RNA sequence: GGGAACGACUCGAGUAGAGUCGAAAAGGCUAUGAAGAGCUCUGUGCUAGCAGAGAAGAUGUCGAGGUCAGUGUUUAUUGGCGCAGCAGCUACAGCCAGAGGCCCACGUCUAGCUCAACGCUUACAGCUGUACGACUAUGUUCGCAUAGUCGUACAGAAAAGAAACAACAACAACAAC
Reactivity to 2A3 in 0.01 (KOAc 150mM, MgCl2 10mM, bicine 150mM(pH8.5), 24C), signal-to-noise 3, nucleotides 027 to 126: g010g000c020u060a060u290g130a090a170g040a050g090c010u000c000u000g010u040g020c030u030a020g000c050a000g040a030g020a110a030g060a070u120g080u190c070g050a060g170g020u020c020a030g060u040g110u140u130u140a180u170u070g010g000c040g000c040a030g020c020a010g020c040u040a070c030a010g000c010c010a020g040a030g060g040c010c020c020a020c020g040u010c050u020a000g000c040u020c050a080a060c140g000c080u060u140a030c050a030g010
Reactivity to DMS in 0.01 (KOAc 150mM, MgCl2 10mM, bicine 150mM(pH8.5), 24C), signal-to-noise 3, nucleotides 027 to 126: g000g010c010u000a110u020g010a150a170g000a090g030c020u000c010u000g020u020g020c030u010a080g030c050a070g000a050g000a110a070g000a050u000g010u000c100g010a170g010g010u000c030a070g010u010g000u020u000u000a090u010u000g010g010c000g020c010a060g010c140a030g020c030u000a080c120a030g000c010c010a100g010a150g030g000c010c010c010a130c080g000u000c030u000a050g000c010u010c060a060a090c180g010c080u000u010a080c160a070g000
This 177-nucleotide RNA was probed chemically with 2A3 and DMS. For DMS the reverse transcriptase was MarathonRT. The RNA was probed in 150 mM KOAc, 10 mM MgCl2 and 150 mM bicine (pH 8.5) at 24 C. The DMS profile rests on 2,742 reads.